[RMDB]
RNA sequence: GGGAACGACUCGAGUAGAGUCGAAAAAGUGUUCAAGGGAAGGAGAAAUAAAGGGCAGAGAGGCAGCGGUGGUGUCAGGGGAAGCCCACAGGAGUUAACAGCAGGGUUGCCUCAACCUAGAGAGGAAGUAUUUAAUGAGUUUCGACUCAUUAAAUACAAAAGAAACAACAACAACAAC
Reactivity to 2A3 in 0.01 (KOAc 150mM, MgCl2 10mM, bicine 150mM(pH8.5), 24C), signal-to-noise 4, nucleotides 027 to 126: a000g100u080g030u060u060c040a040a040g020g000g020a020a040g050g040a070g050a030a120a020u210a050a080a040g010g010g000c040a010g040a000g010a020g110g000c020a010g010c040g060g000u070g020g060u070g040u060c080a070g030g010g000g020a040a020g040c020c030c010a020c010a010g100g030a080g050u080u110a080a030c020a020g050c010a020g090g010g000u050u050g030c000c010u020c010a020a050c000c020u100a070g020a010g000a010g140g010a070a040
Reactivity to DMS in 0.01 (KOAc 150mM, MgCl2 10mM, bicine 150mM(pH8.5), 24C), signal-to-noise 7, nucleotides 027 to 126: a090g000u000g010u000u010c070a080a090g010g000g010a070a050g010g010a100g000a050a060a070u010a060a080a080g000g010g000c060a060g010a120g010a070g010g010c050a050g020c090g010g010u000g000g010u010g010u010c070a080g000g000g010g020a090a110g000c040c000c020a080c100a070g000g010a070g010u000u000a050a070c100a060g000c100a080g000g000g010u000u000g000c020c010u000c010a080a050c050c040u000a070g010a140g010a040g000g000a090a110